The record gives the reactivity of an RNA of 177 nucleotides to 2A3 and DMS. 2A3 adducts were read by reverse transcription with SuperScript II with manganese. The DMS profile rests on 3,257 reads. DMS adducts were read by reverse transcription with MarathonRT. Source: RMDB library OK1LIB, as collected in RNAgym.
[RMDB]
RNA sequence: GGGAACGACUCGAGUAGAGUCGAAAAGGUGCCAGCGGUCGUCGAGCUCCACCAGGCGGUCGUCAGCUUCCUCUGUCUGGCUGUGCGAGACCAGGGGCAGAACCCGGACCGCCGUUGCGCGCUGUUCGACUGCUAAGCUUUUCGAAGCUUAGCAGUCAAAAGAAACAACAACAACAAC
Reactivity to 2A3 in 0.01 (KOAc 150mM, MgCl2 10mM, bicine 150mM(pH8.5), 24C), signal-to-noise 4, nucleotides 027 to 126: g070g010u080g000c010c010a010g010c030g020g010u070c030g030u010c020g040a030g020c020u020c010c000a070c020c030a030g020g000c010g000g020u060c010g040u120c020a020g020c020u090u050c020c010u020c010u030g010u010c020u020g070g030c090u120g090u110g060c090g080a030g020a070c040c140a060g000g010g010g000c030a030g050a090a060c000c010c030g010g010a010c000c020g000c020c000g030u010u070g010c050g000c010g000c060u050g050u060u040c030
Reactivity to DMS in 0.01 (KOAc 150mM, MgCl2 10mM, bicine 150mM(pH8.5), 24C), signal-to-noise 2, nucleotides 027 to 126: g010g010u000g000c030c010a090g010c050g000g040u000c070g000u000c020g000a170g000c020u000c050c040a160c090c140a100g020g030c000g000g000u010c060g030u040c070a110g020c020u000u010c000c010u010c010u000g010u010c020u000g030g000c050u030g000u050g010c030g000a100g000a030c110c090a100g010g000g000g010c110a040g010a070a300c030c110c070g000g000a010c030c010g000c010c030g020u010u000g030c070g000c100g000c010u000g000u000u000c060